[RMDB]
The record gives the reactivity of an RNA of 177 nucleotides to DMS.
The RNA was probed in 150 mM KOAc, 10 mM MgCl2 and 150 mM bicine (pH 8.5) at 24 C.
It was measured as part of the RMDB library TTRINS.
RNA sequence: GGGAACGACUCGAGUAGAGUCGAAAAGAUAUGGAGAUCCAGUAGCUAGGUCAACUUGUUGUCUUACGGGUCGGAAACGACCCUGUAAGACAACAAGUUGACCUUGGACCUACGGAUCUCCUAAGUCCUAAUUGCAUUUGUUCGCAAAUGCAAUUAGAAAAGAAACAACAACAACAAC
Reactivity to DMS in 0.01 (KOAc 150mM, MgCl2 10mM, bicine 150mM(pH8.5), 24C), signal-to-noise 3, nucleotides 027 to 126: g010a120u010a260u010g000g010a020g000a010u000c000c000a180g020u000a110g020c030u000a010g010g010u000c000a010a020c000u000u000g020u000u000g010u000c000u000u010a010c000g000g010g020u010c000g010g000a110a100a260c010g030a030c010c010c000u010g060u000a000a030g010a020c000a000a010c000a000a010g010u010u010g000a000c000c000u000u000g020g000a070c300c010u000a000c010g000g000a000u000c000u000c000c000u010a010a080g010u000c040